[RMDB]
RNA sequence: GGGAACGACUCGAGUAGAGUCGAAAAUUGAUUGUCCAGUACCUCCUGAUAAAACUGUUUGCUCAGUUGUUUCCAAGGAUGGUAAUUAUAUAGAUAGGUUGGUUAAUGUCACCUAUUAUAAUAGAACUCAACAAUCUUUCUGUGGCGAGUUUGGCUGGACCUUAGGAUAUUUCGAUAUCCUAAGGUCAAAAGAAACAACAACAACAAC
Reactivity to DMS in 0.01 (KOAc 150mM, MgCl2 10mM, bicine 150mM(pH8.5), 24C), signal-to-noise 2, nucleotides 027 to 156: u010u000g010a080u000u000g000u000c030c110a120g020u000a060c010c010u010c000c020u020g010a100u010a050a060a060a050c000u000g010u000u020u020g020c090u000c010a040g040u000u000g000u000u000u010c030c030a180a080g010g000a030u020g030g020u010a020a070u000u000a080u000a060u000a130g000a020u000a020g010g030u000u010g040g000u000u010a120a140u010g020u000c040a040c010c000u010a020u000u000a070u000a080a100u010a060g000a040a040c030u000c020a040a000c020a020a050u000c000u000u010u010c070u020g030u010g000g020c020g020a090g010u000u000u010g000g030c100u010g010
Reactivity to 2A3 in 0.01 (KOAc 150mM, MgCl2 10mM, bicine 150mM(pH8.5), 24C), signal-to-noise 3, nucleotides 027 to 156: u030u030g010a010u040u060g010u040c040c020a020g030u010a040c010c010u030c000c000u010g020a050u060a100a100a010a000c020u020g040u130u160u180g080c090u050c040a010g010u000u010g050u110u150u020c090c070a070a050g030g000a010u060g010g010u000a000a000u040u010a020u000a010u030a040g020a020u000a010g000g030u070u140g090g020u160u240a160a080u300g100u090c020a000c010c000u010a000u050u010a020u020a040a070u050a040g070a050a030c030u040c080a010a010c020a050a070u020c000u040u120u060c050u100g090u080g060g000c050g040a080g040u050u080u020g070g020c020u070g060
An RNA of 207 nucleotides, treated with DMS and 2A3 and read out base by base. The RNA was probed in 150 mM KOAc, 10 mM MgCl2 and 150 mM bicine (pH 8.5) at 24 C.